[RMDB]
RNA sequence: GGGAACGACUCGAGUAGAGUCGAAAACGAAUAGAAUUCGUUCUAUUCGAAUGACUGCUAAAAGCAGAGUUGUCUGCGCCGAGCAGAAACGGCAAAGGAAAAAGUAGCCCAGAUUCGUCUGGGCUAAGAUAACCCGUUGGUUCGCCAACGGGUUAUCAAAAGAAACAACAACAACAAC
Reactivity to DMS in 0.01 (KOAc 150mM, MgCl2 10mM, bicine 150mM(pH8.5), 24C), signal-to-noise 1, nucleotides 027 to 126: c000g000a010a010u020a000g000a010a070u000u000c190g000u000u020c000u000a010u000u000c000g000a150a100u000g040a130c000u010g030c000u000a040a100a060a150g000c060a000g000a030g020u010u010g020u000c000u010g000c160g030c110c060g000a120g010c060a030g000a020a040a140c010g010g000c080a050a120a140g000g040a020a080a130a130a110g020u010a030g000c000c000c000a000g010a010u010u010c220g000u000c010u000g000g020g020c000u000a000a000